An RNA of 207 nucleotides, treated with 2A3 and read out base by base. For 2A3, 633 sequencing reads were counted. Conditions: 150 mM KOAc, 10 mM MgCl2 and 150 mM bicine (pH 8.5), 24 C.
RNA sequence: GGGAACGACUCGAGUAGAGUCGAAAAGCUUUGACACUGGGACAGAUUCUUGUACUGAUCCUGCAGGAGCCUUUCCACGGGCACGUGCCUCUCUCCAGCAAUGUUGGUCACACCAAAGCCUCUCAUGGGAGUGAUCAAGGCCAAGUCAGCCACCACCAGUCCGUGAAGGAUUCGUCCUUCACGGACUAAAAGAAACAACAACAACAAC
Reactivity to 2A3 in 0.01 (KOAc 150mM, MgCl2 10mM, bicine 150mM(pH8.5), 24C), signal-to-noise 1, nucleotides 027 to 156: g030c020u170u000u040g040a010c020a060c160u050g050g020g000a040c000a120g060a160u090u110c070u210u250g080u040a030c000u000g030a170u030c030c000u000g000c000a000g020g060a000g000c000c000u070u080u000c020c040a010c080g000g000g000c070a030c090g020u170g020c000c000u050c010u000c000u000c000c000a020g000c000a110a250u140g040u080u010g060g000u020c020a040c000a030c030c010a000a050a120g030c000c040u100c010u000c000a050u040g010g000g040a260g030u000g020a040u040c010a020a020g020g010c000c020a070a020g000u040c000a000g000c000c000a020c040c010a020c000c050